Conditions: 150 mM KOAc, 10 mM MgCl2 and 150 mM bicine (pH 8.5), 24 C. An RNA of 177 nucleotides, treated with DMS and 2A3 and read out base by base. The 2A3 profile rests on 1,076 reads. For DMS, 3,733 sequencing reads were counted. It was measured as part of the RMDB library OK1LIB. Values cover nucleotides 27 to 126.

RNA sequence: GGGAACGACUCGAGUAGAGUCGAAAAUAAAAAUGGGAUUCAAACGUGCUAGGCAUAUCAAAGUACGUAAUUUUCUUAGUUUUGCUGGCUCUAUAUCUCCUCUCGCUCUAUAGAUACAGAUAUAUAACAUGCCAUAUCGAUUCGUCGAUAUGGCAUGAAAAGAAACAACAACAACAAC
Reactivity to DMS in 0.01 (KOAc 150mM, MgCl2 10mM, bicine 150mM(pH8.5), 24C), signal-to-noise 2, nucleotides 027 to 126: u070a010a030a010a060a050u060g020g000g000a030u010u020c150a060a070a040c010g000u000g010c010u000a050g000g040c170a090u020a090u040c040a120a070a020g000u000a010c060g010u030a030a070u040u000u000u000c010u010u010a090g020u000u000u000u000g010c090u000g010g010c040u000c010u020a030u010a050u020c020u030c010c020u000c060u010c060g020c030u000c040u020a040u010a050g000a050u000a030c050a070g030a050u020a090u020a080u010a050a150
Reactivity to 2A3 in 0.01 (KOAc 150mM, MgCl2 10mM, bicine 150mM(pH8.5), 24C), signal-to-noise 2, nucleotides 027 to 126: u200a000a070a020a010a040u170g030g000g070a030u100u080c150a110a090a000c020g000u000g000c000u030a020g180g000c100a090u120a090u250c100a100a140a070g000u000a030c000g020u040a040a090u000u060u000u000c000u000u080a010g020u000u120u120u000g050c000u030g000g020c000u020c000u070a080u010a040u080c030u010c010c000u020c000u000c000g000c020u000c000u040a100u020a010g070a010u020a130c080a070g250a030u050a030u040a010u040a160a040